Source information
This 170-nucleotide RNA was probed chemically with DMS and 2A3. DMS adducts were read by reverse transcription with MarathonRT.
RNA sequence: GGGAACGACUCGAGUAGAGUCGAAAAGAAAGCUGGAGACUCGCGGAAUUUCAUUCAAGAAGAAGGUAACGGAGAAAGGAGCGGGCCUCCCGAUCCGAGUGGUCCACGGCGUAUCAAGUUUGGAGUCAAAGCAAGUACUUCGGUACUUGCAAAAGAAACAACAACAACAAC
Reactivity to DMS in 0.01 (KOAc 150mM, MgCl2 10mM, bicine 150mM(pH8.5), 24C), signal-to-noise 6, nucleotides 027 to 129: g020a090a060a050g030c000u000g000g000a070g020a090c070u030c030g060c000g030g030a260a040u030u040u030c070a110u010u080c050a150a000g020a130a070g060a070a070g030g020u060a080a130c100g060g000a100g000a020a020a030g040g040a230g060c130g000g000g000c050c020u030c020c000c050g030a070u050c070c060g000a070g030u000g050g020u000c000c020a040c050g030g020c050g040u030a060u000c100a050a070g000u000u000u000g050g010a100g030u020c110a070a120a170
Reactivity to 2A3 in 0.01 (KOAc 150mM, MgCl2 10mM, bicine 150mM(pH8.5), 24C), signal-to-noise 4, nucleotides 027 to 129: g060a010a040a000g080c060u060g000g010a040g000a050c000u000c030g000c040g060g080a010a020u040u060u080c050a070u040u040c050a120a040g050a060a020g020a020a010g110g020u080a130a020c070g040g000a050g030a050a020a010g000g000a020g000c000g000g020g000c000c000u010c000c020c000g000a020u000c020c010g000a040g020u090g000g030u000c040c010a030c030g080g000c050g040u090a070u120c050a100a010g000u010u090u070g020g030a010g050u030c050a100a000a010

The 2A3 profile rests on 6,459 reads.